Structure probing data (2A3) for a 177-nucleotide construct. High 2A3 reactivity points to a flexible backbone, as in loops and unpaired stretches. Values cover nucleotides 27 to 126. The 2A3 profile rests on 283 reads.

[RMDB]
RNA sequence: GGGAACGACUCGAGUAGAGUCGAAAAGAAGGUGUAGCUUUUGUGGUGAAUUUACAGAUUGUUUGUUUGAGGAAAUUGUCCAUGACACUCUAUGCAAUCUCUGCGUGUGCCCUUACUGCGAAGGUCACGGGGCAAGCUCAUUCGUGAGCUUGCCCCGAAAAGAAACAACAACAACAAC
Reactivity to 2A3 in 0.01 (KOAc 150mM, MgCl2 10mM, bicine 150mM(pH8.5), 24C), signal-to-noise 1, nucleotides 027 to 126: g080a070a000g000g000u050g060u050a090g000c000u000u000u120u080g030u030g090g000u000g080a030a160u030u050u110a000c000a000g220a280u150u150g000u060u240u200g300u000u080u080g170a140g000g090a000a090a090u120u030g080u170c120c020a070u120g000a100c070a000c060u090c000u000a070u280g020c030a060a000u000c030u100c050u040g120c000g000u030g000u000g000c060c000c000u020u000a030c000u000g100c090g010a000a000g000g080u020c000a000